[RMDB]
RNA sequence: GGGAACGACUCGAGUAGAGUCGAAAAUGGCAAGUUCCUUGGACUAGUUAGGAUAGCCCAAUAUUUGGUUUAGCUGAACAGCCAACAUCAGCAAAGUGCCUGCAAUUUAGGAGUGGAAUCAUUUUAGGUUCGUAGUUGAAUUCGUUCAACUACGAACAAAAGAAACAACAACAACAAC
Reactivity to DMS in 0.01 (KOAc 150mM, MgCl2 10mM, bicine 150mM(pH8.5), 24C), signal-to-noise 4, nucleotides 027 to 126: u010g010g010c060a100a150g010u000u000c010c000u000u000g010g000a030c020u000a020g030u000u000a150g020g020a160u000a030g010c020c000c010a050a130u000a110u010u010u000g010g010u000u000u000a150g000c020u000g020a040a090c140a100g010c040c040a050a050c140a090u000c040a040g010c020a040a100a080g010u000g000c040c010u000g010c080a040a050u000u000u000a060g000g010a040g010u000g010g000a080a120u030c060a080u000u000u000u010a100g000
Reactivity to 2A3 in 0.01 (KOAc 150mM, MgCl2 10mM, bicine 150mM(pH8.5), 24C), signal-to-noise 3, nucleotides 027 to 126: u040g030g020c040a040a030g060u010u030c000c000u020u070g010g020a090c050u030a060g100u110u100a060g040g090a150u020a010g020c020c000c040a080a080u140a160u170u130u110g050g040u060u090u090a020g000c020u010g000a060a020c030a040g050c040c010a020a020c020a050u000c020a000g010c000a000a040a040g090u090g040c000c040u010g020c080a090a110u000u060u110a100g030g000a050g030u040g020g070a070a040u050c050a020u050u080u050u110a100g020